[RMDB]
The record gives the reactivity of an RNA of 170 nucleotides to DMS and 2A3.
The DMS profile rests on 62,202 reads.
The reactions ran in a buffer of 150 mM KOAc, 10 mM MgCl2 and 150 mM bicine (pH 8.5), at 24 C.
It was measured as part of the RMDB library 15KLIB.
DMS adducts were read by reverse transcription with MarathonRT.

RNA sequence: GGGAACGACUCGAGUAGAGUCGAAAACGCUUGGCAAAUGAGUGUGCUCAGGUGCUAAGCGAAUAUGUUCUAUGUGGUGGUGGUUACUACGUCAAACCUGGAGGUACCAGUAGCGGAGAUGCCACCAAAACCAGAUAGUUCGCUAUCUGGAAAAGAAACAACAACAACAAC
Reactivity to DMS in 0.01 (KOAc 150mM, MgCl2 10mM, bicine 150mM(pH8.5), 24C), signal-to-noise 8, nucleotides 027 to 129: c010g000c000u030u010g010g000c030a030a020a020u020g010a060g000u060g040u070g010c020u000c010a000g000g030u000g000c000u020a030a020g000c000g000a030a020u020a090u020g000u000u000c020u000a090u050g020u020g010g030u000g020g020u000g010g010u010u010a170c020u020a020c010g040u020c090a040a140a180c290c010u050g000g000a240g000g020u010a170c050c010a010g000u000a270g030c030g000g020a030g000a240u020g030c020c030a010c000c030a020a000a060a120
Reactivity to 2A3 in 0.01 (KOAc 150mM, MgCl2 10mM, bicine 150mM(pH8.5), 24C), signal-to-noise 9, nucleotides 027 to 129: c020g010c010u000u000g000g000c000a010a010a040u020g000a010g030u300g060u290g190c000u010c000a010g050g030u020g000c000u000a000a000g000c010g000a000a000u120a050u070g040u030u040c080u050a130u180g160u100g080g080u040g010g010u020g010g050u100u050a110c010u020a020c000g080u120c150a090a100a130c030c010u020g020g040a130g140g090u170a190c010c000a010g010u010a000g010c010g010g020a010g000a080u130g000c000c000a010c000c000a000a000a000a000